RNA sequence: GGGAACGACUCGAGUAGAGUCGAAAAACAAGAAAAAGUUCAGAAACAGUCUUUAUAAGCAUGCUAACCUUAUGGCCAGUCAUGAAUCUCACGCAAUUUCCGGAGAGGACGUCCCAAAGACGAACGGAACGACAUCCCAAUUCGUUGGGAUGUCGUUAAAAGAAACAACAACAACAAC
Reactivity to DMS in 0.01 (KOAc 150mM, MgCl2 10mM, bicine 150mM(pH8.5), 24C), signal-to-noise 2, nucleotides 027 to 126: a110c040a120a130g000a010a110a070a070a100g010u050u040c100a040g000a110a090a030c070a130g000u000c090u000u020u000a040u060a130a140g000c090a070u000g020c100u000a050a090c020c000u000u020a030u000g000g010c000c040a020g020u000c000a040u000g010a090a010u000c050u000c020a100c110g010c160a040a090u000u010u010c040c010g030g000a160g000a090g000g010a010c080g000u000c000c000c050a070a110a050g000a000c040g000a080a080c160g000g070
Reactivity to 2A3 in 0.01 (KOAc 150mM, MgCl2 10mM, bicine 150mM(pH8.5), 24C), signal-to-noise 3, nucleotides 027 to 126: a000c040a000a090g210a060a070a040a010a040g030u120u130c060a020g160a110a110a060c030a020g080u000c000u000u190u070a170u040a150a030g050c000a000u080g020c000u050a040a080c000c000u130u040a080u130g050g000c000c000a000g070u040c020a090u050g070a070a160u070c040u000c000a070c080g020c050a050a210u100u090u010c000c000g040g040a020g000a020g130g060a060c010g010u000c010c010c020a000a130a000g160a110c030g080a070a030c010g030g000

Structure probing data (DMS and 2A3) for a 177-nucleotide construct. It was measured as part of the RMDB library OK1LIB. 2A3 adducts were read by reverse transcription with SuperScript II with manganese. Reactivities are rounded to 0.1 and cut off at 0 and 3. For DMS the reverse transcriptase was MarathonRT.